[RMDB]
RNA sequence: GGGAACGACUCGAGUAGAGUCGAAAACUUUUCAGGACGAUGGACACGAUGCGCGUGUACGGACUGAUCGAGUCCAGCGUCGCCUCGAACAGACAGCCGAAAUCGGUCAACUCGAGGGGCUGUUAGACGCCCCAAAAUCAUUCGUGAUUUUGGGGCGAAAAGAAACAACAACAACAAC
Reactivity to DMS in 0.01 (KOAc 150mM, MgCl2 10mM, bicine 150mM(pH8.5), 24C), signal-to-noise 2, nucleotides 027 to 126: c010u040u060u020u040c150a050g000g000a090c000g010a020u000g010g000a030c000a100c000g000a040u060g030c000g010c060g020u030g040u040a150c170g050g000a140c000u000g000a080u010c030g000a070g000u000c000c000a020g000c000g030u000c000g000c040c000u010c040g040a090a110c250a120g000a020c160a070g000c010c010g000a070a160a200u030c000g000g050u020c210a210a140c130u060c000g000a020g000g000g000g000c020u000g000u000u010a030g010a140
Reactivity to 2A3 in 0.01 (KOAc 150mM, MgCl2 10mM, bicine 150mM(pH8.5), 24C), signal-to-noise 4, nucleotides 027 to 126: c030u140u080u050u060c080a040g050g010a010c030g060a080u080g050g010a020c030a030c050g060a030u140g140c050g000c030g040u150g050u140a150c100g030g050a010c050u230g050a080u040c030g000a000g030u000c000c000a000g030c000g030u050c000g040c000c000u010c000g000a040a020c000a030g060a020c080a030g020c020c000g100a060a160a100u230c000g030g020u110c080a090a060c060u040c020g030a130g040g060g010g020c010u000g030u010u020a050g020a030